[RMDB]
RNA sequence: GGGAACGACUCGAGUAGAGUCGAAAAUUGGAUUCACGCACGACACAGCAGUUAACAAUCGAAGUCUUAGUGACUGUCGAUGGUGUAAAUUUUAGAACAGUCGUUCUAAAUAAUAAGAACACUUAUAGUUUACCAGAUACUUCGGUAUCUGGUAAACAAAAGAAACAACAACAACAAC
Reactivity to 2A3 in 0.01 (KOAc 150mM, MgCl2 10mM, bicine 150mM(pH8.5), 24C), signal-to-noise 1, nucleotides 027 to 126: u010u060g110g040a020u150u000c030a040c100g020c010a040c030g020a000c010a000c000a000g000c000a010g030u070u080a090a040c050a070a000u000c000g000a030a000g030u030c000u050u130a140g020u050g160a000c010u110g160u140c030g000a020u010g000g040u000g010u000a050a080a130u060u020u000u020a000g020a000a010c010a070g300u160c070g000u060u000c040u040a030a010a010u150a020a030u120a040a060g060a040a020c010a010c020u060u100a160u110a170
Reactivity to DMS in 0.01 (KOAc 150mM, MgCl2 10mM, bicine 150mM(pH8.5), 24C), signal-to-noise 1, nucleotides 027 to 126: u050u020g000g000a090u020u020c090a050c120g000c040a080c040g010a090c120a020c140a100g030c080a040g020u000u040a100a120c100a190a040u000c000g000a110a000g000u000c000u010u000a170g040u000g000a010c000u000g020u000c010g010a010u020g000g000u000g010u000a040a080a080u000u000u000u000a000g000a020a030c040a120g040u000c210g010u020u000c010u000a000a040a020u000a040a120u010a100a210g010a100a010c050a030c030u010u000a200u040a160